[RMDB]
RNA sequence: GGGAACGACUCGAGUAGAGUCGAAAAAGCCUUCGUCACUCCAAACGUUUCGGCGAGAAGCAGGCCAUUAUCGCCGGCAUGGCGGCCGACGCGCUGGGCUGGCGUUCGCGACGCGAGGCUGGAUGGCUGGCUAAAGCCUGUUCGCAGGCUUUAGCCAAAAAGAAACAACAACAACAAC
Reactivity to DMS in 0.01 (KOAc 150mM, MgCl2 10mM, bicine 150mM(pH8.5), 24C), signal-to-noise 1, nucleotides 027 to 126: a090g000c000c020u000u000c010g010u010c020a090c080u040c050c040a100a110a150c080g010u000u000u020c050g040g010c060g000a090g010a100a040g020c040a130g020g000c010c050a080u000u000a080u000c250g040c010c000g020g000c100a080u010g020g060c140g010g010c020c020g000a090c120g030c080g010c100u000g020g000g030c100u000g000g000c020g020u000u000c020g020c020g010a060c050g010c110g010a110g000g020c000u000g010g000a060u010g010g020c070